[RMDB]
RNA sequence: GGGAACGACUCGAGUAGAGUCGAAAAUACUUGACUUUAAUAGCUAGAGCUGUCCAAAGAUUGAGUUGCUGUAGGAGGCUGCAUGGUGGGAGGUGUGCAAGCAGAGAAUAAAUAAGCAUUUUGAAGGAAUGUUGUAGGGAAGAUCCAAGCACCAGACACUGAUGCAGAUGUUCGCAUCUGCAUCAGUAAAAGAAACAACAACAACAAC
Reactivity to 2A3 in 0.01 (KOAc 150mM, MgCl2 10mM, bicine 150mM(pH8.5), 24C), signal-to-noise 1, nucleotides 027 to 156: u070a020c030u050u060g000a030c030u190u130u080a170a070u100a180g010c030u010a010g020a000g080c020u010g080u250c060c020a020a080a110g060a170u100u100g070a070g070u040u040g010c070u060g040u060a120g000g060a010g090g030c010u020g030c060a030u050g000g040u000g000g070g000a010g040g000u020g020u000g060c010a000a130g000c010a010g040a000g040a130a020u160a090a100a030u060a000a000g010c000a020u030u130u090u120g080a010a010g000g030a020a000u040g040u240u070g010u210a010g010g070g000a000a000g050a030u010c010c010a060a000g000c030a020c020c000a010g140a040c070
About this RNA:
This 207-nucleotide RNA was probed chemically with 2A3. Reactivities are given for positions 27 through 156. The 2A3 profile rests on 472 reads.